[RMDB]
RNA sequence: GGGAACGACUCGAGUAGAGUCGAAAAGAUAUGGAGGGUCCGAAGCUUGGAUUUAGGUAGUUGAGGACAUUCGGAAACGAAUGUCUACCCACCAACUACCUUGUCAGCUUCUGACCCUCCUAAGUCACAGUAUAUCGAAGUUCGCUUCGAUAUACUGAAAAGAAACAACAACAACAAC
Reactivity to 2A3 in 0.01 (KOAc 150mM, MgCl2 10mM, bicine 150mM(pH8.5), 24C), signal-to-noise 3, nucleotides 027 to 126: g010a030u080a000u200g010g010a000g020g000g010u040c050c050g020a010a000g010c080u300u300g290g000a160u300u300u150a020g010g010u000a000g000u000u010g010a030g000g010a000c000a000u010u000c000g000g030a080a040a020c020g000a000a000u010g020u000c010u040a080c060c060c000a070c020c000a000a000c010u000a010c010c000u000u000g000u010c000a000g000c000u010u000c000u010g000a000c000c000c000u000c000c000u010a010a000g000u000c000a000
Reactivity to DMS in 0.01 (KOAc 150mM, MgCl2 10mM, bicine 150mM(pH8.5), 24C), signal-to-noise 4, nucleotides 027 to 126: g000a050u010a300u010g000g000a000g000g000g000u000c010c230g000a030a000g000c010u000u000g070g010a030u000u000u000a010g050g010u000a010g000u000u000g000a130g030g000a020c000a000u020u000c000g000g000a170a090a220c010g000a010a000u000g000u000c000u010a030c040c050c100a300c090c000a000a010c000u000a010c000c000u000u000g000u000c010a030g000c010u000u000c000u000g000a020c010c000c000u000c000c000u010a010a050g000u010c030a300
Chemical mapping of a 177-nucleotide RNA with 2A3 and DMS. The RNA was probed in 150 mM KOAc, 10 mM MgCl2 and 150 mM bicine (pH 8.5) at 24 C. High 2A3 reactivity points to a flexible backbone, as in loops and unpaired stretches. For DMS the reverse transcriptase was MarathonRT. The DMS profile rests on 4,456 reads. Values cover nucleotides 27 to 126. It was measured as part of the RMDB library TTRINS.